RNA sequence: GGGAACGACUCGAGUAGAGUCGAAAAGAUAUGGAUCGUUCGAUCUGAUGACCUAUACUGAAUGUCGGAAACGACGCGUAUAGCAAGGAUUUCGCGAUCCUAAGUCAAAGGUUGGUUCGCCAACCAAGUAAUAUUCUCGCUUCGGCGAGAAUAUUACAAAAGAAACAACAACAACAAC
Reactivity to 2A3 in 0.01 (KOAc 150mM, MgCl2 10mM, bicine 150mM(pH8.5), 24C), signal-to-noise 2, nucleotides 027 to 126: g000a000u030a010u060g020g000a000u000c000g020u040u060c050g000a010u000c010u060g090a300u060g010a030c010c000u010a010u000a000c080u110g230a300a280u300g010u020c000g030g000a010a040a040c000g020a010c020g010c020g050u000a000u000a000g050c020a300a300g000g000a000u070u040u050c030g000c010g000a000u000c010c010u000a000a010g030u020c010a140a060a000g050g000u020u000g040g020u050u120c190g030c080c020a000a020c010c010a010a000
Reactivity to DMS in 0.01 (KOAc 150mM, MgCl2 10mM, bicine 150mM(pH8.5), 24C), signal-to-noise 2, nucleotides 027 to 126: g000a010u000a160u000g000g000a030u010c000g000u000u000c120g010a010u000c000u000g010a080u030g000a060c300c000u020a010u000a020c000u010g020a090a080u010g010u000c000g000g000a050a040a080c020g020a020c000g050c200g000u000a020u000a000g010c050a020a080g020g000a020u000u000u000c160g000c000g000a010u000c000c000u010a010a120g010u000c030a080a080a160g000g010u000u000g000g000u010u000c180g000c000c010a000a030c000c010a040a080